RNA sequence: GGGAACGACUCGAGUAGAGUCGAAAACUUCACCGGAUAGUGUUUUUUCAGGUCGAUAGCCCGCAACAGCGGCUGUUGCAAGGUGGCCUCAUGCGUACUCAUAGUGUGGGCCUCCCGGCAUCAUCGAAUCAGGAGGGGUAUUCGUACCCCUCCUGAUAAAAGAAACAACAACAACAAC
Reactivity to 2A3 in 0.01 (KOAc 150mM, MgCl2 10mM, bicine 150mM(pH8.5), 24C), signal-to-noise 1, nucleotides 027 to 126: c070u130u150c130a280c090c000g150g040a070u010a060g130u000g140u040u030u000u000u000u080c080a040g050g060u030c010g010a000u010a030g000c070c000c000g000c000a010a090c030a090g070c040g200g010c040u050g000u030u010g010c110a200a030g000g000u000g000g000c000c000u180c010a020u020g000c000g160u130a200c070u030c180a130u130a240g010u020g000u010g000g000g000c000c000u050c020c000c030g010g000c060a020u010c000a010u070c030g030a030
Reactivity to DMS in 0.01 (KOAc 150mM, MgCl2 10mM, bicine 150mM(pH8.5), 24C), signal-to-noise 1, nucleotides 027 to 126: c240u000u010c030a130c050c090g000g000a040u000a090g000u000g010u000u000u000u060u000u000c000a130g020g020u010c010g040a040u000a080g010c060c000c080g020c000a020a080c130a020g020c220g020g000c040u000g000u000u000g050c010a090a030g010g030u000g000g000c000c000u000c030a090u020g010c000g040u020a080c220u220c300a010u110a090g000u000g000u040g000g000g000c000c000u000c000c000c300g000g000c020a050u040c030a030u010c050g010a090